[RMDB]
RNA sequence: GGGAACGACUCGAGUAGAGUCGAAAAGCUGUGCCUAGGUAAGCCUAUUUCUGGGCGCACUACAGGCACUAUGUCGCAUCAUGGUCCCUGUGAACUCGAAGCUUGAUGCGACAAGUUUUGAGUGAUCUCAGACACAAUAGGCUUAGUUCGUGAGAGCUAGUAUCGAUCGAUUCGUCGAUCGAUACUAAAAAGAAACAACAACAACAAC
Reactivity to 2A3 in 0.01 (KOAc 150mM, MgCl2 10mM, bicine 150mM(pH8.5), 24C), signal-to-noise 3, nucleotides 027 to 156: g020c040u030g020u050g070c020c010u040a040g010g070u030a060a010g000c000c000u010a000u020u070u030c020u040g000g020g000c040g040c010a020c000u230a130c010a020g040g030c070a000c010u040a290u040g010u010c020g000c050a000u000c020a020u070g080g030u080c000c000c050u080g040u010g080a110a040c030u040c140g060a080a010g070c020u000u020g010a000u030g030c000g010a020c000a000a010g010u000u040u030u070g020a010g000u010g040a040u000c010u000c020a000g020a030c040a010c000a210a020u000a030g000g010c010u030u010a040g050u200u030c040g030u100g090a190g000a010g050c020
Reactivity to DMS in 0.01 (KOAc 150mM, MgCl2 10mM, bicine 150mM(pH8.5), 24C), signal-to-noise 2, nucleotides 027 to 156: g010c030u010g030u000g030c020c020u000a130g000g010u000a020a090g000c020c010u000a020u020u000u000c050u000g010g010g050c050g000c050a020c020u000a150c050a080g000g020c130a010c080u020a070u000g010u000c050g040c030a070u010c030a050u000g030g010u010c050c020c070u020g010u000g020a150a070c060u030c010g000a030a090g020c010u000u000g050a080u020g030c170g020a020c010a000a010g000u000u000u000u000g020a070g000u020g020a100u000c000u000c010a040g000a170c300a060c150a030a100u000a080g020g020c000u000u000a090g020u020u000c040g030u000g020a110g000a100g010c040